The record gives the reactivity of an RNA of 177 nucleotides to DMS. Values are in units of 0.01, from 0 to 300, in steps of 10. It was measured as part of the RMDB library TTRINS. Values cover nucleotides 27 to 126.
RNA sequence: GGGAACGACUCGAGUAGAGUCGAAAAGAUAUGGAUAGUUAGCGUAGACGAUUGAAUGGCAACAGCGAGAGAUUCGGAAACGAAUCUUCGACAUGCCACAAUCGUCUACGCUAACUAUCCUAAGUCAGAAUGUUCUUAAGUUCGCUUAAGAACAUUCAAAAGAAACAACAACAACAAC
Reactivity to DMS in 0.01 (KOAc 150mM, MgCl2 10mM, bicine 150mM(pH8.5), 24C), signal-to-noise 5, nucleotides 027 to 126: g010a050u000a300u010g010g010a020u000a010g010u000u000a010g010c000g020u000a010g000a020c000g010a020u000u000g020a140a190u000g010g020c000a050a130c300a180g010c030g000a100g010a040g020a010u000u000c000g030g000a110a100a260c010g010a000a000u000c000u000u010c010g010a070c130a230u010g000c000c000a040c010a000a000u000c000g000u000c000u000a000c000g000c000u000a000a000c000u000a000u000c000c000u010a010a050g000u010c070a150